[RMDB]
RNA sequence: GGGAACGACUCGAGUAGAGUCGAAAACCUGUGAGUGGAAACCCGCUUUAUUCACUGGGGUCGACAGCUCUGGGGAGAAAAGGGAGGAUCGGAUGGGAAAAGUAUAUCCUAUGGGAAUCCCUGGGUAUCCAUAGUUCUUGUUCGCAAGAACUAUGGAAAAAGAAACAACAACAACAAC
Reactivity to DMS in 0.01 (KOAc 150mM, MgCl2 10mM, bicine 150mM(pH8.5), 24C), signal-to-noise 2, nucleotides 027 to 126: c030c000u000g030u010g020a050g050u030g020g010a170a140a070c010c030c020g010c150u000u010u010a110u010u010c080a110c070u010g010g020g010g000u000c060g030a170c300a140g000c010u020c010u000g020g040g000g030a110g010a040a010a100a050g010g010g000a040g010g020a140u010c040g010g020a070u030g000g000g000a020a100a190a160g000u030a050u020a130u000c010c000u000a090u010g010g000g020a290a120u000c010c000c020u010g000g020g060u010a120
Structure probing data (DMS) for a 177-nucleotide construct.
The data come from the RNA Mapping Database (RMDB), library VIROID.